[RMDB]
RNA sequence: GGGAACGACUCGAGUAGAGUCGAAAAGAUCGGAAACAGCAGCAGGUGAGUCCGCCUUAUGUGAAGGAUCGGCUGAAAAACGAGGAAAUACUGAGCCAACGCAAGACGGUAGCCGAACAGUAGCAACAAAACGCUUACGUGUUCGCACGUAAGCGAACAGAAAUAUCCAGUUCGCUGGAUAUUUCUGAAAAGAAACAACAACAACAAC
Reactivity to 2A3 in 0.01 (KOAc 150mM, MgCl2 10mM, bicine 150mM(pH8.5), 24C), signal-to-noise 7, nucleotides 027 to 156: g040a050u100c040g030g020a070a060a050c030a030g040c010a010g000c010a010g010g030u040g040a040g050u050c030c040g040c010c010u150u110a140u140g100u060g080a050a030g030g010a030u060c040g020g000c020u050g050a050a020a030a000a030c060g010a050g030g080a030a100a040u130a080c060u050g010a020g010c010c010a040a010c040g010c040a070a010g040a010c030g030g020u040a010g030c030c010g010a010a000c020a040g070u100a010g050c030a010a070c020a040a100a020a020c020g000c000u000u010a000c000g000u000g020u050u070c180g000c080a000c010g000u000a000a010g000c000g000a000a000
Reactivity to DMS in 0.01 (KOAc 150mM, MgCl2 10mM, bicine 150mM(pH8.5), 24C), signal-to-noise 3, nucleotides 027 to 156: g020a100u010c030g000g020a100a060a070c070a070g030c040a070g030c050a080g020g020u010g010a120g010u000c010c030g060c010c010u000u000a070u010g030u000g020a100a130g020g000a090u000c010g000g040c010u000g000a060a000a040a080a080c060g000a120g020g000a070a050a100u000a060c050u000g000a130g010c020c020a040a150c060g000c060a090a060g020a140c040g020g030u000a070g010c040c030g010a050a130c040a070g010u000a060g010c050a040a110c080a050a030a070a170c050g030c000u000u010a000c010g050u000g000u000u000c300g020c000a030c010g010u000a000a000g010c000g000a020a060
Source: RMDB library M2RFPK, as collected in RNAgym. An RNA of 207 nucleotides, treated with 2A3 and DMS and read out base by base. 2A3 adducts were read by reverse transcription with SuperScript II with manganese. For DMS the reverse transcriptase was MarathonRT. The reactions ran in a buffer of 150 mM KOAc, 10 mM MgCl2 and 150 mM bicine (pH 8.5), at 24 C.